Chemical mapping of a 207-nucleotide RNA with 2A3. For 2A3, 1,031 sequencing reads were counted. Source: RMDB library OK3TST, as collected in RNAgym. Reactivities are given for positions 27 through 156. Conditions: 150 mM KOAc, 10 mM MgCl2 and 150 mM bicine (pH 8.5), 24 C.
RNA sequence: GGGAACGACUCGAGUAGAGUCGAAAAUGUGGGUGCACGUGUGUGCACGUGUGUGGGUAAACAUUGUGUGUGCGCAUACGUGUGUGGGUAAACAUUUGUAUGUGCACGCGUGUGUGGGUAAACGUGUGUGCGCACGUAUGUAUGUGUGUACAUUUGACCCCAGGUGAUUAUUCGUAAUCACCUGGGGAAAAGAAACAACAACAACAAC
Reactivity to 2A3 in 0.01 (KOAc 150mM, MgCl2 10mM, bicine 150mM(pH8.5), 24C), signal-to-noise 2, nucleotides 027 to 156: u300g030u100g000g040g000u100g000c130a030c030g020u030g030u060g060u110g040c000a000c070g000u000g000u010g000u070g000g020g000u180a030a230a000c060a150u170u190g100u020g000u000g000u020g140c010g020c010a000u000a020c040g000u000g000u000g000u020g000g140g110u170a040a110a000c000a040u000u000u230g080u000a000u010g090u050g000c000a000c020g000c000g010u080g000u030g020u020g020g000g040u070a080a130a070c040g050u050g000u000g020u000g080c040g000c000a000c060g030u050a060u250g260u030a050u040g000u000g020u020g000u000a000c010a060u010u000u110g070a060